The data come from the RNA Mapping Database (RMDB), library OK3TST. This 207-nucleotide RNA was probed chemically with 2A3 and DMS. For DMS, 3,871 sequencing reads were counted. High DMS reactivity at an A or C suggests that its Watson-Crick edge is free. Conditions: 150 mM KOAc, 10 mM MgCl2 and 150 mM bicine (pH 8.5), 24 C. 2A3 adducts were read by reverse transcription with SuperScript II with manganese.
RNA sequence: GGGAACGACUCGAGUAGAGUCGAAAAAUGUUCACAAUUUCAGCACUAAAUAUGAUAUUAACUAUAGGCUUUUGUAAAUGCUCUUUAUCAGAUUGAGGAAGUGUCUUUCUAUUUCUUAUUUGCUGUGAGUUUUUAACAUGAAUAGAUGCAUUCAUGUAAGAUACGUUAUAUUCGUAUAACGUAUCUUAAAAGAAACAACAACAACAAC
Reactivity to 2A3 in 0.01 (KOAc 150mM, MgCl2 10mM, bicine 150mM(pH8.5), 24C), signal-to-noise 3, nucleotides 027 to 156: a000u070g020u070u050c020a050c050a160a070u040u140u150c030a010g000c010a030c070u090a060a060a070u190a120u100g010a030u020a070u270u080a180a040c060u060a090u090a200g040g020c000u110u050u130u250g070u110a030a110a060u090g030c000u000c020u090u090u030a090u070c030a050g040a200u060u120g020a070g000g050a060a010g040u020g070u040c050u010u130u040c020u060a100u040u140u000c030u080u160a200u200u100u080g010c010u030g000u020g040a060g050u030u040u080u050u090a020a010c000a000u010g000a020a000u020a040g130a080u190g080c060a000u040u000c000a000u010g000u000
Reactivity to DMS in 0.01 (KOAc 150mM, MgCl2 10mM, bicine 150mM(pH8.5), 24C), signal-to-noise 2, nucleotides 027 to 156: a060u000g000u000u000c040a110c010a090a180u000u010u010c040a110g000c060a080c050u000a080a080a090u000a080u000g010a070u000a090u000u000a040a120c060u020a270u010a120g030g000c030u000u010u000u000g020u010a040a070a070u010g000c020u000c040u000u000u000a060u010c030a070g000a070u000u000g010a110g050g010a070a070g000u000g030u000c030u010u010u010c050u010a090u000u000u010c050u000u000a080u020u000u010g030c010u010g000u000g000a080g020u000u000u000u010u000a050a140c010a010u000g010a020a020u000a100g010a140u010g010c090a240u000u000c010a020u010g000u010